[RMDB]
RNA sequence: GGGAACGACUCGAGUAGAGUCGAAAAUGCGAAAGGAUGGGUCAAGCGUACGGAAACCAUCCACCCAUCCGAAACGUACGCGUACGGAAACCAUCCGCCAUCCGAAACGUACGGUCUGCAGGCAUGCGAAAGGAUGGCGUACGGAAACCAUCCCUCGUCAGUGAUAAUAGUUCGCUAUUAUCACUGAAAAAGAAACAACAACAACAAC
Reactivity to DMS in 0.01 (KOAc 150mM, MgCl2 10mM, bicine 150mM(pH8.5), 24C), signal-to-noise 3, nucleotides 027 to 156: u000g010c070g020a120a150a070g010g000a040u000g010g020g000u000c070a090a140g020c010g020u000a200c050g030g000a100a080a110c000c010a080u000c030c030a050c060c030c010a130u000c020c020g020a040a100a090c030g010u000a000c020g030c030g020u000a250c080g010g000a080a140a180c020c040a100u010c040c000g030c010c010a070u000c010c020g000a070a190a090c030g030u000a010c060g000g000u000c060u000g020c110a130g050g020c100a110u000g000c000g030a110a150a300g000g020a020u010g000g050c000g020u000a000c000g000g020a060a140a100c000c010a100u000c000c000c010u020c070g020
Reactivity to 2A3 in 0.01 (KOAc 150mM, MgCl2 10mM, bicine 150mM(pH8.5), 24C), signal-to-noise 6, nucleotides 027 to 156: u140g010c010g050a060a030a040g010g010a010u020g010g010g070u120c140a120a060g060c040g080u070a030c050g070g020a120a120a100c040c020a050u050c010c020a020c000c010c000a030u030c020c020g030a060a050a010c030g020u090a020c020g020c020g060u080a050c100g020g030a150a090a040c010c010a050u060c050c030g000c020c010a020u000c000c000g030a090a120a080c020g020u030a020c150g010g050u030c040u150g130c120a150g000g030c020a020u060g000c020g070a120a020a020g020g000a000u000g000g000c000g000u000a000c010g010g010a000a040a000c000c000a010u020c000c010c000u020c020g040